[RMDB]
RNA sequence: GGGAACGACUCGAGUAGAGUCGAAAAUAAAAAGGAAAUGUAUCAGACGCUAUGAAGCCUCCACGUAGCAAAACCGAAAGGGUCUGAUACAUUACGACUGAAGGAGGCACGGUCAAAACAAAAAAAACAUGAUAAUUCAGUUCGCUGAAUUAUCAUGAAAAGAAACAACAACAACAAC
Reactivity to 2A3 in 0.01 (KOAc 150mM, MgCl2 10mM, bicine 150mM(pH8.5), 24C), signal-to-noise 2, nucleotides 027 to 126: u080a000a050a000a000a000g100g010a060a000a010u020g010u000a000u000c000a000g010a000c000g000c010u020a000u010g050a130a030g020c000c000u000c010c000a010c010g000u000a000g000c010a100a250a130a160c010c010g040a050a020a020g030g000g000u000c000u000g010a000u000a000c000a000u000u000a000c000g000a000c000u040g040a150a040g020g000a000g000g020c010a000c010g000g000u010c000a010a020a070a050c100a080a060a090a050a050a010a000a030
Reactivity to DMS in 0.01 (KOAc 150mM, MgCl2 10mM, bicine 150mM(pH8.5), 24C), signal-to-noise 1, nucleotides 027 to 126: u040a020a090a130a060a080g000g000a100a020a010u000g000u000a000u000c000a040g000a000c000g000c000u020a000u010g000a030a040g030c000c000u000c010c010a300c000g010u010a010g010c000a150a050a160a130c000c000g000a130a130a110g000g010g010u000c000u000g000a000u000a000c030a020u000u000a050c080g000a030c010u000g010a070a020g000g020a010g000g010c010a060c040g000g040u020c010a170a080a040a070c070a030a020a000a040a060a050a090a090
The record gives the reactivity of an RNA of 177 nucleotides to 2A3 and DMS. The data come from the RNA Mapping Database (RMDB), library M2PK90. The RNA was probed in 150 mM KOAc, 10 mM MgCl2 and 150 mM bicine (pH 8.5) at 24 C. For DMS the reverse transcriptase was MarathonRT. For 2A3 the reverse transcriptase was SuperScript II with manganese. Reactivities are given for positions 27 through 126. For 2A3, 3,151 sequencing reads were counted.